This 177-nucleotide RNA was probed chemically with 2A3 and DMS. For 2A3, 1,733 sequencing reads were counted. Conditions: 150 mM KOAc, 10 mM MgCl2 and 150 mM bicine (pH 8.5), 24 C.
[RMDB]
RNA sequence: GGGAACGACUCGAGUAGAGUCGAAAAGAGUUUUGUUAAACAGAUCUCUAGCGGGAAACCUUAAUGGUUCAGAUAAAAGUGUGAGUCUACCAACACUGACUGUAGUAUACUCGACAGGUAUCCCCGACGUAAUAGUGGGGUUCGCCCCACUAUUACGAAAAGAAACAACAACAACAAC
Reactivity to 2A3 in 0.01 (KOAc 150mM, MgCl2 10mM, bicine 150mM(pH8.5), 24C), signal-to-noise 2, nucleotides 027 to 126: g010a000g000u030u030u010u010g090u120u160a170a280a030c000a060g050a080u020c020u000c000u050a030g060c100g000g070g020a070a070a050c000c000u060u130a180a090u190g070g000u040u050c020a010g010a120u090a100a130a030a050g040u040g020u010g060a030g080u000c080u110a110c100c010a060a040c040a010c050u080g060a030c030u020g030u110a030g070u000a060u050a060c040u050c050g070a030c040a040g070g040u030a120u040c010c000c000c020g050a050
Reactivity to DMS in 0.01 (KOAc 150mM, MgCl2 10mM, bicine 150mM(pH8.5), 24C), signal-to-noise 3, nucleotides 027 to 126: g010a030g010u000u000u000u010g010u000u020a120a100a300c030a030g010a020u000c000u000c000u000a150g000c090g010g010g030a090a040a020c000c000u000u000a090a090u010g000g000u000u010c090a080g010a070u010a030a080a060a050g000u000g010u000g000a140g020u000c080u010a100c080c040a090a030c020a020c050u000g010a140c070u000g020u000a120g000u000a070u000a040c030u000c040g010a070c200a030g020g000u000a080u010c030c000c010c030g010a160